[RMDB]
Overview: This 207-nucleotide RNA was probed chemically with 2A3 and DMS. Reactivities are rounded to 0.1 and cut off at 0 and 3. DMS adducts were read by reverse transcription with MarathonRT.

RNA sequence: GGGAACGACUCGAGUAGAGUCGAAAAAAUGCCGCCUCAGUUCCAAGCUCUUUCGUGGCACUGUAAACAGUCCUAUUGAGUUAGGGGCAGUCAACCACGUUGCGAAGCUAAAUCAUCUGGUCGAGAGUUACGAUUCCCUACUUCGGUAGGGAAUCAACCAUACUCUUAGGUUCGCCUAAGAGUAUGGAAAAGAAACAACAACAACAAC
Reactivity to 2A3 in 0.01 (KOAc 150mM, MgCl2 10mM, bicine 150mM(pH8.5), 24C), signal-to-noise 6, nucleotides 027 to 156: a000a010u120g040c030c020g010c010c020u040c020a060g030u080u010c010c000a070a010g010c010u010c010u020u040u050c030g020u020g000g030c090a020c020u020g040u100a110a170a070c040a100g110u050c000c000u030a050u040u130g120a160g270u040u050a040g020g010g020g000c010a000g000u030c010a010a050c010c000a010c020g010u020u050g070c110g120a100a020g010c020u070a090a090a080u100c050a020u030c070u060g020g030u060c050g030a010g010a020g110u080u100a080c100g000a000u000u000c000c000c000u010a000c000u030u060c170g070g000u000a000g010g000g000a000a000u000c000a000a000
Reactivity to DMS in 0.01 (KOAc 150mM, MgCl2 10mM, bicine 150mM(pH8.5), 24C), signal-to-noise 2, nucleotides 027 to 156: a090a060u010g010c020c040g040c030c010u000c020a070g000u000u020c030c030a120a160g000c080u000c030u000u000u000c030g000u000g020g000c030a040c000u000g020u000a040a110a060c030a170g020u000c010c020u010a050u010u010g010a300g030u000u000a020g010g000g010g020c000a020g020u000c010a070a040c000c010a040c070g010u020u020g000c100g010a100a070g020c040u010a060a050a090u000c030a130u000c060u000g010g020u000c050g010a100g010a190g020u010u000a090c130g010a040u000u010c000c010c000u000a020c000u000u000c260g060g030u000a020g000g000g000a000a000u010c000a020a140